Notes: An RNA of 177 nucleotides, treated with DMS and read out base by base. Reactivities are given for positions 27 through 126. Conditions: 150 mM KOAc, 10 mM MgCl2 and 150 mM bicine (pH 8.5), 24 C. DMS adducts were read by reverse transcription with MarathonRT. The DMS profile rests on 856 reads.

RNA sequence: GGGAACGACUCGAGUAGAGUCGAAAAAGAGGAGGAGCUGGGUGCUUGCAUUCUGGCCUCCCUAGGACCUCCCCACUUGUGCCCCUCCUUGGGGCCCCCCAGAAACCUGAGGAUAGAGUGCAUUGCCACAGUUGGGGUAGUUCGCUACCCCAACUGUAAAAGAAACAACAACAACAAC
Reactivity to DMS in 0.01 (KOAc 150mM, MgCl2 10mM, bicine 150mM(pH8.5), 24C), signal-to-noise 1, nucleotides 027 to 126: a150g010a130g000g000a080g000g020a060g010c040u000g010g000g020u000g000c050u010u040g020c020a030u000u000c030u010g000g000c010c050u010c000c160c070u010a060g030g000a240c080c040u000c010c000c000c080a080c120u010u000g030u010g010c040c000c000c060u010c300c190u000u000g020g020g010g020c010c010c030c000c000c030a100g000a110a100a060c080c030u010g010a060g050g000a050u000a080g000a030g000u000g000c040a040u020u030g000c070c150